[RMDB]
Source: RMDB libraries RFM100 and RFMREP, as collected in RNAgym.
Chemical mapping of a 177-nucleotide RNA with DMS and 2A3.
Reactivities are given for positions 27 through 126.
DMS adducts were read by reverse transcription with MarathonRT.
The RNA was probed in 150 mM KOAc, 10 mM MgCl2 and 150 mM bicine (pH 8.5) at 24 C.
For 2A3, 897 sequencing reads were counted.
RNA sequence: GGGAACGACUCGAGUAGAGUCGAAAAAGUUUUGGGAGAUUAAUACUGCUCGCGUUCUUCUUUAGCAUCCGUUUUGGAUGCACCUUGAGGAACAAGGUGGGUAAUUUUCGUUUUGAAGAUAUGCCACCAAUGCACCGCAAUUCGUUGCGGUGCAUUGAAAAGAAACAACAACAACAAC
Reactivity to DMS in 0.01 (KOAc 150mM, MgCl2 10mM, bicine 150mM(pH8.5), 24C), signal-to-noise 3, nucleotides 027 to 126: a090g000u000u000u010u000g010g000g020a140g000a080u020u020a040a100u010a130c030u000g000c040u010c020g020c270g000u000u000c000u000u000c010u000u020u030a240g000c000a000u000c000c000g020u070u000u020u030g070g000a010u010g010c000a020c180c120u010u000g000a020g010g010a020a030c010a080a140g000g010u000g000g010g010u030a000a010u000u000u000u010c000g030u020u030u040u040g000a010a000g010a010u010a040u020g010c020c000a020c080
Reactivity to 2A3 in 0.01 (KOAc 150mM, MgCl2 10mM, bicine 150mM(pH8.5), 24C), signal-to-noise 3, nucleotides 027 to 126: a000g040u100u000u030u020g100g060g010a070g010a030u030u120a090a060u130a180c050u030g080c000u020c080g080c060g010u000u000c020u000u000c000u050u150u030a020g020c000a000u000c000c010g160u130u170u230u300g020g000a000u000g000c000a040c000c000u000u060g020a020g090g030a010a010c000a000a000g030g000u020g000g020g050u110a050a070u040u020u000u000c090g030u060u030u130u300g040a050a030g010a050u040a040u210g010c030c000a000c000